Structure probing data (DMS and 2A3) for a 177-nucleotide construct. The RNA was probed in 150 mM KOAc, 10 mM MgCl2 and 150 mM bicine (pH 8.5) at 24 C. DMS adducts were read by reverse transcription with MarathonRT.
[RMDB]
RNA sequence: GGGAACGACUCGAGUAGAGUCGAAAAAAGAAUGGGGGACUGGCUGCCCUGAUGAGAACAAACCCAUGACUAGCGUCGUAACAUCAACAGUGGGGGCUGUUGGUGUCGGCAGCCACUAGUCAAAGAAACAUAAUUUUGCUUUCGAGCAAAAUUAUGUAAAAGAAACAACAACAACAAC
Reactivity to DMS in 0.01 (KOAc 150mM, MgCl2 10mM, bicine 150mM(pH8.5), 24C), signal-to-noise 3, nucleotides 027 to 126: a050a030g010a120a070u000g010g000g010g010g010a150c090u010g000g030c000u000g010c040c040c050u000g020a070u000g000a150g010a070a090c110a050a080a100c010c010c020a130u000g000a030c000u000a010g000c080g010u000c020g020u000a110a010c000a020u000c010a010a030c000a000g000u010g010g000g000g000g000c010u000g000u000u000g000g020u000g000u010c040g000g000c010a030g010c030c040a160c010u000a010g000u010c010a080a080a110g000a100a110
Reactivity to 2A3 in 0.01 (KOAc 150mM, MgCl2 10mM, bicine 150mM(pH8.5), 24C), signal-to-noise 1, nucleotides 027 to 126: a000a000g110a070a060u100g000g010g000g020g030a010c010u040g020g000c020u020g030c010c030c000u050g040a090u120g060a070g030a070a040c050a100a070a050c000c000c020a050u080g010a010c000u000a000g040c010g060u020c010g020u070a030a030c000a000u010c000a000a000c000a010g000u220g040g020g010g030g000c000u010g000u000u000g010g010u000g000u010c000g010g030c010a000g040c010c020a010c000u010a000g000u000c010a020a040a000g050a000a160